Description:
The data come from the RNA Mapping Database (RMDB), library ARCHII. The record gives the reactivity of an RNA of 207 nucleotides to 2A3. The RNA was probed in 150 mM KOAc, 10 mM MgCl2 and 150 mM bicine (pH 8.5) at 24 C. Reactivities are given for positions 27 through 156. For 2A3, 382 sequencing reads were counted. For 2A3 the reverse transcriptase was SuperScript II with manganese.
RNA sequence: GGGAACGACUCGAGUAGAGUCGAAAAGUGAUUCAGGUCGAGAGUGAGUCUCCUCUCGGAAAUCAAAGGCUCAAACAAAAAGUAAAUGCGAAUAACAUCGUUAACUUUGCUCGUAAGGAUGCUCUAGUAGCUGCCUAAACACCUCUUAUAGGUUCGAGUUUCCAAUCUCGUUCGCGAGAUUGGAAACAAAAGAAACAACAACAACAAC
Reactivity to 2A3 in 0.01 (KOAc 150mM, MgCl2 10mM, bicine 150mM(pH8.5), 24C), signal-to-noise 1, nucleotides 027 to 156: g020u020g020a170u250u000c040a060g180g040u010c040g010a010g010a000g000u120g070a030g060u020c110u060c100c010u000c030u000c000g010g090a060a170a000u120c000a000a000a010g000g000c010u000c000a000a040a000c040a010a120a070a000a000g020u010a000a000a140u130g000c000g000a070a000u030a130a100c010a040u000c000g020u030u000a000a010c000u170u120u010g000c010u100c070g090u190a050a010g090g000a010u020g000c010u020c020u060a040g040u090a020g040c020u010g090c020c000u090a120a080a040c040a040c000c030u000c040u080u190a120u280a110g030g000u100u140c040g000a000